Conditions: 150 mM KOAc, 10 mM MgCl2 and 150 mM bicine (pH 8.5), 24 C. An RNA of 207 nucleotides, treated with DMS and 2A3 and read out base by base.
RNA sequence: GGGAACGACUCGAGUAGAGUCGAAAACGCUGGGAAUCCACCGCCACACAGAGGCUACUGAAGCGCGCACGGUAGCCGACGAAGUGUGGGCGUGGAUUCCUGUGCUGAAGCGCGCACGGCAACCGAAAGGUGCGGGUGUAACGAUUCGUCGUUACAAACUUUUAGCUAACUUCGGUUAGCUAAAAGUAAAAGAAACAACAACAACAAC
Reactivity to DMS in 0.01 (KOAc 150mM, MgCl2 10mM, bicine 150mM(pH8.5), 24C), signal-to-noise 2, nucleotides 027 to 156: c000g000c040u020g030g000g020a050a040u010c000c010a090c030c130g040c010c010a030c000a030c020a100g010a300g000g010c000u000a010c010u000g000a080a110g020c010g060c000g040c000a300c030g020g050u000a010g020c000c010g010a120c120g000a130a180g010u000g000u000g010g050g070c040g000u000g050g000a020u000u000c000c000u010g020u000g080c010u000g010a070a110g100c000g000c030g000c010a300c000g020g000c000a110a130c010c020g000a080a110a180g020g000u000g000c040g020g000g030u010g030u000a010a010c000g010a080u000u010c300g010u000c010g040u000u000a050c000a080a100
Reactivity to 2A3 in 0.01 (KOAc 150mM, MgCl2 10mM, bicine 150mM(pH8.5), 24C), signal-to-noise 4, nucleotides 027 to 156: c010g000c030u050g000g000g000a000a000u000c000c000a020c040c100g070c020c000a070c000a010c000a060g080a040g080g000c000u000a000c000u030g050a250a050g030c020g000c010g000c020a010c010g010g000u010a000g010c080c010g060a060c030g100a120a240g020u030g000u030g080g060g000c040g000u050g000g000a000u000u000c000c000u000g000u020g020c010u040g030a090a030g030c020g000c000g000c010a010c020g030g000c020a020a050c010c030g040a110a050a030g060g000u010g000c000g020g060g030u080g010u010a000a010c010g000a010u040u070c210g050u010c010g000u110u010a010c020a010a090